[RMDB]
Structure probing data (2A3 and DMS) for a 177-nucleotide construct. For 2A3 the reverse transcriptase was SuperScript II with manganese. It was measured as part of the RMDB library OK1LIB. DMS adducts were read by reverse transcription with MarathonRT.
RNA sequence: GGGAACGACUCGAGUAGAGUCGAAAACUGCCCUGGGUUUUCGCUGUCUUUCAGAUAGACUGUGCCUAAUUUGUUCGUCUCUUAAUUGUACUGAUGUUGUGUUAUAUCUAAGGGCGGAUGGUUAACGCGAUAAGAUAAGUUUCGACUUAUUUUAUCGAAAAGAAACAACAACAACAAC
Reactivity to 2A3 in 0.01 (KOAc 150mM, MgCl2 10mM, bicine 150mM(pH8.5), 24C), signal-to-noise 9, nucleotides 027 to 126: c050u100g020c000c000c000u020g000g010g000u000u010u000u030c010g010c010u030g070u140c060u020u060u020c020a020g000a040u030a010g020a020c000u020g030u060g040c000c010u050a090a100u080u030u190g030u010u020c020g020u000c060u000c000u120u040a070a040u120u090g060u090a050c040u070g110a160u080g060u180u030g030u010g020u080u090a130u020a020u080c060u030a020a020g010g000g000c000g000g010a020u050g040g040u050u060a120a030c060g010
Reactivity to DMS in 0.01 (KOAc 150mM, MgCl2 10mM, bicine 150mM(pH8.5), 24C), signal-to-noise 9, nucleotides 027 to 126: c070u010g010c010c010c010u010g000g010g010u000u000u000u000c020g010c000u000g010u040c150u000u000u000c050a030g000a040u010a060g010a020c020u000g010u010g000c020c020u010a050a080u030u010u020g020u000u000c060g010u000c020u020c020u010u010a070a090u010u000g010u010a060c090u010g010a100u010g010u000u010g020u000g000u010u010a040u020a030u010c050u000a070a070g000g000g000c000g000g010a050u010g000g010u010u010a060a080c160g000
The RNA was probed in 150 mM KOAc, 10 mM MgCl2 and 150 mM bicine (pH 8.5) at 24 C.